[RMDB]
RNA sequence: GGGAACGACUCGAGUAGAGUCGAAAAUGAUCCUCCCUCUCCUUGUCGGUGAACCCGCUCUUGUGAGGCCUCUUCAUAGGUCCGGAGUCGACCUCCAUCUGAUCUGUUCGGGCCCUCUUCGCCGGGGUAGGCCGGCCUUUCGAGGCCGGCAAAAGAAACAACAACAACAAC
Reactivity to DMS in 0.01 (KOAc 150mM, MgCl2 10mM, bicine 150mM(pH8.5), 24C), signal-to-noise 2, nucleotides 027 to 129: u060g010a130u020c020c020u000c050c040c000u160c030u010c000c140u000u080g090u000c070g000g090u060g040a100a180c000c060c000g030c040u030c010u000u000g020u050g020a030g000g050c050c000u010c080u000u050c110a080u040a010g000g000u030c030c110g020g000a040g000u040c060g010a070c000c020u020c060c000a120u040c090u040g000a080u050c060u040g050u010u040c000g010g000g080c000c040c020u020c010u070u010c120g040c070c060g020g010g070g030u010a130g000
Reactivity to 2A3 in 0.01 (KOAc 150mM, MgCl2 10mM, bicine 150mM(pH8.5), 24C), signal-to-noise 4, nucleotides 027 to 129: u170g010a030u030c000c030u000c000c010c000u000c000u030c000c020u040u070g040u030c040g000g020u070g090a090a080c030c040c030g040c000u010c010u060u090g020u050g120a070g000g030c010c030u090c010u160u040c040a130u030a080g020g010u000c030c010g020g000a030g010u010c030g070a080c000c020u060c000c000a070u020c080u110g000a120u020c030u020g110u080u060c010g000g020g010c010c020c000u030c020u050u070c010g010c020c000g000g000g030g010u020a030g080
This 170-nucleotide RNA was probed chemically with DMS and 2A3. DMS adducts were read by reverse transcription with MarathonRT. The data come from the RNA Mapping Database (RMDB), library 15KLIB. For 2A3, 5,536 sequencing reads were counted. The reactions ran in a buffer of 150 mM KOAc, 10 mM MgCl2 and 150 mM bicine (pH 8.5), at 24 C. For DMS, 7,739 sequencing reads were counted.